[RMDB]
An RNA of 177 nucleotides, treated with 2A3 and read out base by base. The RNA was probed in 150 mM KOAc, 10 mM MgCl2 and 150 mM bicine (pH 8.5) at 24 C.
RNA sequence: GGGAACGACUCGAGUAGAGUCGAAAAAGGGAAUUUGCAUAUCCGGCUGCUCCUGCCACACCCGCAGGUCAGUCAAGUGGGUGAGCAUCGUGUAGAUGGAGCAUGGUUCCGUGCUGGUGCCAACCUCGCGUCACGACCGAUUCGUCGGUCGUGACGCAAAAGAAACAACAACAACAAC
Reactivity to 2A3 in 0.01 (KOAc 150mM, MgCl2 10mM, bicine 150mM(pH8.5), 24C), signal-to-noise 2, nucleotides 027 to 126: a010g140g020g060a080a190u160u110u120g040c030a000u090a060u180c010c000g030g000c080u030g000c020u110c000c000u010g030c000c010a180c010a010c040c000c000g050c010a000g000g050u000c030a000g030u060c000a020a010g080u130g040g010g000u010g020a070g020c030a000u060c010g030u060g120u080a100g000a200u120g070g030a040g000c030a060u090g080g000u060u030c040c000g010u010g000c000u020g000g060u080g000c000c020a050a070c020c030u040c020
Source: RMDB library OK1LIB, as collected in RNAgym.